Description
The record gives the reactivity of an RNA of 177 nucleotides to DMS and 2A3. The DMS profile rests on 889 reads.
RNA sequence: GGGAACGACUCGAGUAGAGUCGAAAAUGAGACACCUUCGGGUGUCUCACAUUAAGCUGACCAGCUAUGAGGUCAAUAUCGUCAUGCACAAAUAGAAUAAAUCAGCUUGCUCCUUCGGGAGCAAGAAUUCUAUAGCGAACUUCGGUUCGCUAUAGAAAAAAGAAACAACAACAACAAC
Reactivity to DMS in 0.01 (KOAc 150mM, MgCl2 10mM, bicine 150mM(pH8.5), 24C), signal-to-noise 1, nucleotides 027 to 126: u000g000a000g010a000c000a000c000c000u000u020c270g000g000g030u000g030u030c000u000c000a010c140a120u000u000a100a070g010c120u000g000a090c030c040a150g010c030u000a060u000g000a130g030g010u000c050a110a030u000a050u010c090g000u010c100a060u000g010c100a080c170a030a040a060u000a080g010a090a160u000a000a090a060u000c100a080g000c000u000u000g000c000u000c000c000u000u030c180g020g020g000a010g000c000a010a000g010a060a040
Reactivity to 2A3 in 0.01 (KOAc 150mM, MgCl2 10mM, bicine 150mM(pH8.5), 24C), signal-to-noise 1, nucleotides 027 to 126: u060g000a000g000a020c020a000c000c000u010u030c190g050g000g000u000g000u030c000u000c020a000c000a040u090u070a000a030g050c020u020g000a010c020c000a010g100c030u080a090u220g090a080g000g040u030c070a100a040u140a080u120c130g090u090c030a050u150g030c050a030c020a070a130a030u210a030g070a130a020u190a110a040a110u080c030a000g000c000u000u020g000c000u000c000c010u020u030c200g070g000g010a000g100c000a000a000g000a000a000

It was measured as part of the RMDB library M2PK50. For DMS the reverse transcriptase was MarathonRT. Reactivities are rounded to 0.1 and cut off at 0 and 3.